Record summary: This 177-nucleotide RNA was probed chemically with DMS and 2A3. 2A3 adducts were read by reverse transcription with SuperScript II with manganese. The DMS profile rests on 51,528 reads. It was measured as part of the RMDB library OK2TST. DMS adducts were read by reverse transcription with MarathonRT. Values cover nucleotides 27 to 126.
RNA sequence: GGGAACGACUCGAGUAGAGUCGAAAAUCGCGGAUUCGAAGGGCGAGCUGGCUAUUCGUUUCGGCAGCUUUGUUUUCCAGAUCGAUGGCCGAUUUCGCUGCUGUUUCGAGCCUGUCUUUGUCGGCCAAGAGAGAGGAAUAUUCGUAUUCCUCUCUCUAAAAGAAACAACAACAACAAC
Reactivity to DMS in 0.01 (KOAc 150mM, MgCl2 10mM, bicine 150mM(pH8.5), 24C), signal-to-noise 9, nucleotides 027 to 126: u010c090g020c040g010g000a060u000u000c040g010a060a070g010g010g010c020g010a090g020c120u010g010g010c020u000a100u000u000c030g010u000u000u000c020g010g020c050a050g010c080u000u000u000g010u010u000u000u000c010c020a150g010a100u010c120g010a180u000g010g010c020c020g000a040u000u000u000c110g010c040u000g010c030u000g010u000u010u000c080g000a040g000c030c170u000g000u010c040u000u000u000g010u000c030g010g000c020c030a080
Reactivity to 2A3 in 0.01 (KOAc 150mM, MgCl2 10mM, bicine 150mM(pH8.5), 24C), signal-to-noise 7, nucleotides 027 to 126: u080c030g000c030g080g020a060u070u060c040g030a070a030g050g010g010c020g020a050g100c070u050g080g000c010u060a100u140u090c020g030u020u020u020c020g070g000c010a010g010c000u090u130u150g060u040u080u050u010c010c010a030g040a160u140c080g060a080u050g020g000c020c010g000a020u060u090u060c050g000c030u050g020c010u040g060u140u130u120c040g010a010g020c010c030u060g040u080c020u020u070u090g030u040c020g000g000c000c000a010